[RMDB]
RNA sequence: GGGAACGACUCGAGUAGAGUCGAAAAGUAUCGGAGUUUUCCUGCCAGCCACUGAUCGCCACUUCUUUGCGGCCCGCAUCAUUAAUGCGCACAUCCAGUGCCAAUACAAUGGCUUCAGCACCGUAGCGAAAGUUGUACAAUUCGUUGUACAACUUUCAAAAGAAACAACAACAACAAC
Reactivity to 2A3 in 0.01 (KOAc 150mM, MgCl2 10mM, bicine 150mM(pH8.5), 24C), signal-to-noise 5, nucleotides 027 to 126: g070u060a080u140c060g050g020a060g030u010u000u070u050c010c010u010g030c010c000a010g040c010c000a030c030u050g010a070u050c030g040c040c000a040c020u080u030c000u050u080u100g030c020g020g020c010c020c030g010c010a030u040c010a010u060u180a130a050u100g020c030g000c050a010c000a050u040c040c020a020g020u010g040c010c000a020a010u110a070c060a030a060u040g030g000c000u040u030c020a010g000c020a010c040c010g060u060a020g040c020
Reactivity to DMS in 0.01 (KOAc 150mM, MgCl2 10mM, bicine 150mM(pH8.5), 24C), signal-to-noise 8, nucleotides 027 to 126: g010u010a080u010c060g010g000a100g010u000u000u000u000c010c020u000g000c040c050a100g010c030c040a060c060u010g000a050u000c060g010c050c040a060c080u000u000c060u000u010u010g010c060g010g010c030c060c040g010c060a040u000c100a070u010u010a050a080u010g010c090g010c060a040c060a070u010c080c080a100g010u000g010c020c030a050a070u010a050c260a070a080u000g010g000c040u000u000c060a050g010c060a060c040c040g000u000a080g020c200